[RMDB]
RNA sequence: GGGAACGACUCGAGUAGAGUCGAAAAAAUACGGCCAGCACCAGCACGUUGACCGCGUCGCCGCCGUACCCCCACGCCACCAGGGGGACGCCGGCCACCGCCGCACCCGACAGCGCAUCGGCCACCAGUAGGUUAACUAGUUCGCUAGUUAACCUACAAAAGAAACAACAACAACAAC
Reactivity to 2A3 in 0.01 (KOAc 150mM, MgCl2 10mM, bicine 150mM(pH8.5), 24C), signal-to-noise 3, nucleotides 027 to 126: a000a000u190a030c060g020g000c020c000a010g030c030a030c030c030a030g030c040a010c080g030u030u080g080a080c040c010g020c020g040u040c040g010c010c020g070c010c000g120u280a300c010c000c000c000c020a030c060g070c010c020a060c010c020a060g000g010g000g020g010a000c010g020c000c000g010g010c010c010a030c020c010g000c000c020g020c020a040c000c010c000g030a030c050a030g010c020g000c030a050u070c040g030g000c000c000a030c020c000a020
Reactivity to DMS in 0.01 (KOAc 150mM, MgCl2 10mM, bicine 150mM(pH8.5), 24C), signal-to-noise 5, nucleotides 027 to 126: a060a070u010a050c060g010g000c030c030a090g010c040a080c050c040a090g010c070a060c080g020u000u000g010a070c080c070g000c060g040u010c260g000c010c030g010c210c020g010u000a070c020c000c000c010c000a080c110g000c040c040a040c050c030a150g020g000g020g000g000a040c040g020c170c020g000g000c020c060a040c050c050g010c070c040g010c060a070c030c020c020g010a080c090a070g010c040g020c040a060u000c050g020g000c020c020a060c070c070a110